RNA sequence: GGGAACGACUCGAGUAGAGUCGAAAAUCAGCUCUGGAGUCCUCCGACCCGUGAGGUCGAGGAUCCCCGCGCAGGGAGGCAGCCACCAGGAGAAAGCGGAGAAGUCACCUCCAGAGAAACCCUCUCCCUCUAAAUAUCUGUUCGCAGAUAUUUAGAGAAAAGAAACAACAACAACAAC
Reactivity to DMS in 0.01 (KOAc 150mM, MgCl2 10mM, bicine 150mM(pH8.5), 24C), signal-to-noise 2, nucleotides 027 to 126: u010c180a140g010c020u000c010u000g010g000a040g000u010c020c000u000c020c050g030a010c000c010c040g000u040g030a180g030g010u000c010g010a020g000g010a110u000c010c010c010c050g020c160g000c100a050g020g020g000a040g000g000c030a090g000c020c020a080c040c040a070g020g000a060g000a060a140a160g020c010g010g000a060g000a090a130g010u010c120a120c280c000u000c010c010a040g000a040g020a070a110a160c040c000c030u000c030u000c040c060
Reactivity to 2A3 in 0.01 (KOAc 150mM, MgCl2 10mM, bicine 150mM(pH8.5), 24C), signal-to-noise 1, nucleotides 027 to 126: u030c010a010g060c000u000c010u030g020g020a020g030u050c000c020u010c020c080g030a020c010c000c020g180u130g100a150g000g010u010c020g010a010g000g000a010u000c000c000c010c020g070c010g040c080a040g000g010g040a030g040g010c010a000g030c000c020a040c040c020a030g000g020a040g040a050a100a030g030c020g050g030a060g030a110a010g040u040c010a010c060c000u000c000c000a000g030a000g000a040a020a030c000c000c010u020c000u010c010c000

An RNA of 177 nucleotides, treated with DMS and 2A3 and read out base by base. For 2A3, 1,689 sequencing reads were counted.